[RMDB]
RNA sequence: GGGAACGACUCGAGUAGAGUCGAAAAGAACAUCAGUUCGCUGAUGUUCAAAGGCCGACUAGUGUUGGGUCGCGAAAGGCCAUACAUAAACAUUCACUCAGAAAACAACGUCCUUCGGGACGUUGAACCAACUGAGGAUCUUCGGAUCCUCAGUUGGAAAAGAAACAACAACAACAAC
Reactivity to 2A3 in 0.01 (KOAc 150mM, MgCl2 10mM, bicine 150mM(pH8.5), 24C), signal-to-noise 2, nucleotides 027 to 126: g000a000a010c000a000u030c020a030g020u040u080c120g020c140u000g000a000u020g010u010u000c000a010a000a000g010g000c020c000g020a020c070u000a010g060u010g090u160u160g110g250g110u160c010g000c030g080a030a040a010g010g030c000c000a020u080a020c010a050u130a010a090a000c030a080u140u260c050a040c050u100c060a000g130a080a060a000a010c000a020a000c010g010u000c030c000u040u080c220g030g010g020a010c000g010u000u000g000a000a000
Reactivity to DMS in 0.01 (KOAc 150mM, MgCl2 10mM, bicine 150mM(pH8.5), 24C), signal-to-noise 1, nucleotides 027 to 126: g010a000a010c000a020u000c000a010g000u000u000c240g000c000u000g000a000u010g000u000u000c000a020a140a130g000g000c000c000g020a070c160u000a060g030u000g010u000u000g000g000g000u000c010g060c070g010a100a080a140g010g000c010c040a060u020a090c160a050u000a070a050a070c110a020u000u010c060a160c060u010c040a070g010a050a050a090a300c010a000a010c000g010u000c000c000u000u000c140g030g010g010a020c000g000u000u000g000a040a110